[RMDB]
RNA sequence: GGGAACGACUCGAGUAGAGUCGAAAAGGCUCGAAGUUCGCUUCGAGCCAAAUAAAUUCAGCGGUAAUUCGUCCGCAAAUAUUACCGCUGAUGCGGAGGAAAAAACAACCGUGUUCGCACGGUUGAAUCUAUGGCCUUAGUUCGCUAAGGCCAUAGAAAAAGAAACAACAACAACAAC
Reactivity to 2A3 in 0.01 (KOAc 150mM, MgCl2 10mM, bicine 150mM(pH8.5), 24C), signal-to-noise 1, nucleotides 027 to 126: g000g010c020u000c010g020a010a010g010u050u160c160g010c150u000u040c000g010a000g010c000c010a000a010a010u000a000a020a060u050u030c010a000g000c020g000g040u010a020a000u070u140c090g160u040c060c080g040c080a000a090a000u120a010u020u010a000c000c010g000c000u000g050a000u020g000c030g000g140a150g060g070a050a170a030a040a020a050c000a000a010c000c000g000u010g020u000u090c240g050c100a000c050g000g000u010u010g010a000a010
Reactivity to DMS in 0.01 (KOAc 150mM, MgCl2 10mM, bicine 150mM(pH8.5), 24C), signal-to-noise 2, nucleotides 027 to 126: g020g030c010u000c000g010a000a000g020u000u010c300g010c010u000u000c000g000a010g010c030c010a000a020a020u010a040a070a100u010u000c010a010g000c000g030g000u000a010a000u010u000c200g010u000c110c120g000c090a060a050a080u010a040u000u000a020c000c000g010c000u000g020a010u000g020c140g030g000a090g000g000a010a070a070a040a050a160c000a010a000c020c000g030u000g000u000u010c160g000c000a000c000g000g000u000u000g000a050a080